Structure probing data (2A3 and DMS) for a 177-nucleotide construct.
For 2A3, 4,026 sequencing reads were counted.
The reactions ran in a buffer of 150 mM KOAc, 10 mM MgCl2 and 150 mM bicine (pH 8.5), at 24 C.
DMS adducts were read by reverse transcription with MarathonRT.
[RMDB]
RNA sequence: GGGAACGACUCGAGUAGAGUCGAAAAGCACUGUUGCGACGCUGAUGGAUACGAGAUGACGUUGGCACAAACGCAAUUGGUGAUGCAGCAGCAGCCAACGAAGGACAGGGAACAAACGCUGGUAGCAUCUGUGACUCAAAUUCGUUUGAGUCACAGAAAAAGAAACAACAACAACAAC
Reactivity to 2A3 in 0.01 (KOAc 150mM, MgCl2 10mM, bicine 150mM(pH8.5), 24C), signal-to-noise 3, nucleotides 027 to 126: g030c010a000c040u030g030u060u050g000c010g060a020c040g040c040u030g020a020u030g030g050a040u040a190c130g070a060g020a180u140g070a050c020g010u020u000g030g000c040a010c060a060a100a010c060g010c050a030a100u060u140g060g000u060g020a070u080g010c030a040g000c020a000g000c000a000g000c020c020a050a020c040g020a040a020g030g010a010c050a030g010g010g050a070a030c060a040a080a020c070g040c020u020g030g060u040a020g020c000a050
Reactivity to DMS in 0.01 (KOAc 150mM, MgCl2 10mM, bicine 150mM(pH8.5), 24C), signal-to-noise 4, nucleotides 027 to 126: g020c050a080c030u000g020u000u010g000c020g030a110c160g020c020u000g010a100u000g000g010a100u020a080c130g020a150g030a070u000g030a190c030g000u000u000g010g020c050a080c130a080a050a170c090g020c090a040a080u010u020g030g010u010g010a070u000g010c020a070g000c090a070g020c050a110g000c020c020a040a030c070g010a120a090g020g010a080c070a060g000g000g000a050a100c080a050a090a130c180g000c040u000g010g010u000a090g020c080a120